The record gives the reactivity of an RNA of 177 nucleotides to 2A3 and DMS. It was measured as part of the RMDB library TTRDEL. For 2A3 the reverse transcriptase was SuperScript II with manganese. Reactivities are given for positions 27 through 126. In probing experiments dimethyl sulfate is read out at A N1 and C N3, which are open when not base-paired. For DMS, 3,888 sequencing reads were counted.
[RMDB]
RNA sequence: GGGAACGACUCGAGUAGAGUCGAAAAGAUAUGGAUCCUGAACGGGAGCCACUCGGAAACGAGAUGGCAUCGAUCGUUAGGAUCCUAAGUCAAAACUGAACACCUGUCUUCGGACAGGUGUUCAGAAUCCAUUGAAAUUGUUCGCAAUUUCAAUGGAAAAAGAAACAACAACAACAAC
Reactivity to 2A3 in 0.01 (KOAc 150mM, MgCl2 10mM, bicine 150mM(pH8.5), 24C), signal-to-noise 3, nucleotides 027 to 126: g030a010u080a010u100g000g010a000u000c010c010u080g260a040a000c000g000g040g040a000g000c020c000a000c000u000c010g060g000a030a050a030c020g000a000g090a130u010g010g000c000a050u230c030g080a140u100c000g000u000u030a000g000g010a000u010c000c000u000a050a000g020u000c020a010a000a140a170c010u010g000a000a000c000a000c020c000u000g010u000c000u120u190c300g030g000a000c010a000g020g000u000g000u010u000c000a000g000a000a010
Reactivity to DMS in 0.01 (KOAc 150mM, MgCl2 10mM, bicine 150mM(pH8.5), 24C), signal-to-noise 3, nucleotides 027 to 126: g000a050u010a300u020g000g000a010u000c000c000u000g010a010a010c000g000g000g030a070g010c000c000a030c010u000c000g010g010a100a070a160c010g010a020g010a120u000g010g020c010a140u000c100g010a060u010c010g000u000u000a030g000g000a010u000c000c000u010a010a070g010u000c030a070a080a120a170c010u000g010a010a000c010a010c000c000u000g010u000c000u000u020c240g020g010a000c000a000g000g010u000g000u000u000c000a000g000a060a070